Chemical mapping of a 177-nucleotide RNA with 2A3 and DMS. Conditions: 150 mM KOAc, 10 mM MgCl2 and 150 mM bicine (pH 8.5), 24 C. For 2A3 the reverse transcriptase was SuperScript II with manganese. DMS (dimethyl sulfate) methylates the pairing face of unpaired adenines and cytosines. The data come from the RNA Mapping Database (RMDB), library OK1LIB.

RNA sequence: GGGAACGACUCGAGUAGAGUCGAAAAGUAUCUAGGCGUCCACGGCGGCGGUGGUACUAGUGCGGGUACCUUCAAGGACAUAGACGACUCCGCAUUUGCGUGCGCGGGUGCCGGUGGCGCAGAGCUGCACCAUAUCGACCUUCGGGUCGAUAUGGUGAAAAGAAACAACAACAACAAC
Reactivity to 2A3 in 0.01 (KOAc 150mM, MgCl2 10mM, bicine 150mM(pH8.5), 24C), signal-to-noise 5, nucleotides 027 to 126: g040u040a230u230c020u060a070g070g060c020g010u020c020c040a030c010g010g010c010g040g040c090g080g100u090g050g010u020a020c010u030a020g040u010g030c010g000g010g010u090a170c020c000u090u160c150a190a090g090g030a040c030a120u180a040g090a060c100g030a030c060u020c040c000g020c030a020u040u030u250g100c070g010u020g000c020g000c080g060g060g090u040g000c010c020g000g010u000g010g000c010g030c010a000g010a010g030c040u070g010
Reactivity to DMS in 0.01 (KOAc 150mM, MgCl2 10mM, bicine 150mM(pH8.5), 24C), signal-to-noise 2, nucleotides 027 to 126: g070u010a050u010c020u000a030g020g000c020g000u030c010c050a030c060g020g000c040g030g000c030g030g000u010g000g010u020a000c040u000a030g030u000g040c020g000g010g010u010a030c040c020u020u040c160a120a100g040g010a140c150a130u020a070g010a090c180g000a090c050u020c000c040g000c030a040u020u020u040g010c090g030u000g010c000g000c020g000g000g000u010g020c000c000g000g020u050g010g010c030g010c000a030g000a060g010c080u000g010